[RMDB]
RNA sequence: GGGAACGACUCGAGUAGAGUCGAAAAGAUAUGGAUGGAGGUCGAGUGGUACUAUGUAUUCGGAAACGAAUACACGAAUACCACGAGACCUAUGAAGUCCUAAGUCAAAGGCAUCUUCGGAUGCCAAUCACUAAAGUAUCUUCGGAUACUUUAGUGAAAAAGAAACAACAACAACAAC
Reactivity to 2A3 in 0.01 (KOAc 150mM, MgCl2 10mM, bicine 150mM(pH8.5), 24C), signal-to-noise 6, nucleotides 027 to 126: g030a030u080a030u200g010g000a000u030g020g060a000g000g000u010c010g000a000g000u010g000g000u000a030c030u030a040u040g010u000a010u000u010c010g020g020a070a060a050c010g000a010a000u010a000c010a000c010g070a120a200u010a010c000c000a000c000g000a010g000a000c000c000u020a130u010g000a000a010g000u000c010c000u030a150a030g060u050c060a070a050a110g000g000c000a010u000c010u080u120c300g150g000a000u000g010c020c000a000a020
Reactivity to DMS in 0.01 (KOAc 150mM, MgCl2 10mM, bicine 150mM(pH8.5), 24C), signal-to-noise 9, nucleotides 027 to 126: g010a070u000a300u010g000g010a000u000g010g010a000g020g030u000c000g000a300g010u000g000g010u010a010c070u010a160u000g000u000a010u000u000c000g010g000a130a100a230c000g010a010a000u000a000c000a010c080g000a080a120u000a000c000c000a010c000g000a300g000a000c000c000u000a030u010g000a120a190g000u000c000c000u000a030a120g000u010c040a090a100a100g000g000c000a000u000c000u000u000c240g030g010a010u000g000c000c000a020a040

Chemical mapping of a 177-nucleotide RNA with 2A3 and DMS.
DMS (dimethyl sulfate) methylates the pairing face of unpaired adenines and cytosines.
2A3 adducts were read by reverse transcription with SuperScript II with manganese.
DMS adducts were read by reverse transcription with MarathonRT.
For 2A3, 25,555 sequencing reads were counted.